[RMDB]
Source: RMDB library OK2TST, as collected in RNAgym.
Chemical mapping of a 177-nucleotide RNA with DMS and 2A3.
The reactions ran in a buffer of 150 mM KOAc, 10 mM MgCl2 and 150 mM bicine (pH 8.5), at 24 C.
For DMS the reverse transcriptase was MarathonRT.
RNA sequence: GGGAACGACUCGAGUAGAGUCGAAAAAACAGCGAGACGUGGUCAACAGCGUCAUGGCCUCCGUGCCGGGACACCCCUUCUGGAAAUUCAUCAUAGGCCAGAUGCUCUCGAAAAUGGAGGGUGCCCGACGGUCCUUUAUAUUCGUAUAAAGGACCGUAAAAGAAACAACAACAACAAC
Reactivity to DMS in 0.01 (KOAc 150mM, MgCl2 10mM, bicine 150mM(pH8.5), 24C), signal-to-noise 3, nucleotides 027 to 126: a060a040c120a090g010c080g000a090g010a090c090g030u010g020g000u000c090a070a090c130a100g000c020g040u020c010a070u010g000g020c010c000u010c150c090g020u000g050c210c000g010g010g010a050c030a060c070c020c010c020u000u000c030u030g000g010a060a060a100u000u000c150a070u010c130a070u000a090g010g010c010c020a070g010a030u000g000c120u010c020u000c040g020a070a060a050a070u000g000g000a030g000g000g020u000g000c010c000c000g010
Reactivity to 2A3 in 0.01 (KOAc 150mM, MgCl2 10mM, bicine 150mM(pH8.5), 24C), signal-to-noise 2, nucleotides 027 to 126: a010a010c080a030g050c030g050a120g030a040c060g000u080g040g070u070c030a030a030c070a100g020c000g050u040c040a090u030g000g000c000c020u000c010c040g040u020g070c040c020g010g020g020a040c010a020c010c020c010c000u040u010c000u020g130g050a170a190a170u190u070c040a060u060c020a040u150a190g010g100c000c000a020g020a030u020g010c000u010c010u010c040g100a100a070a020a040u170g040g000a030g000g040g020u030g020c000c000c010g030